RNA sequence: GGGAACGACUCGAGUAGAGUCGAAAAGCAUAAGAAUAGACAUAUAGGUCAGUGGAAUAGAAGUGAGAGUCAGUAAAUAAACCCGUGUAUCUAUGGUCAACUGAUUUUUGGCAAGGAUGCCAGGACCGUUACGAGUUACUUUCGAGUAACUCGUAACAAAAGAAACAACAACAACAAC
Reactivity to 2A3 in 0.01 (KOAc 150mM, MgCl2 10mM, bicine 150mM(pH8.5), 24C), signal-to-noise 2, nucleotides 027 to 126: g030c000a040u070a180a000g070a160a100u060a140g040a020c040a020u220a030u080a130g020g000u010c010a020g050u030g030g010a050a070u080a110g130a180a020g030u070g080a080g000a000g090u010c050a000g040u100a090a060a130u070a030a090a020c030c000c010g000u050g000u000a030u030c010u030a020u090g050g010u020c020a010a020c050u080g080a090u030u040u070u070u020g010g000c020a010a100g140g020a060u060g010c040c000a020g000g040a030c000c020
Reactivity to DMS in 0.01 (KOAc 150mM, MgCl2 10mM, bicine 150mM(pH8.5), 24C), signal-to-noise 3, nucleotides 027 to 126: g010c040a060u000a070a140g010a130a050u000a080g020a060c060a080u010a070u000a090g020g000u000c020a060g000u000g000g010a080a080u010a040g000a080a070g000u000g000a120g010a060g000u000c040a030g010u010a040a080a120u000a070a050a110c040c020c040g020u000g010u000a040u000c030u010a050u000g000g000u000c060a060a080c140u000g000a040u010u010u000u000u010g010g010c020a080a150g000g010a090u010g010c020c010a060g000g000a090c150c090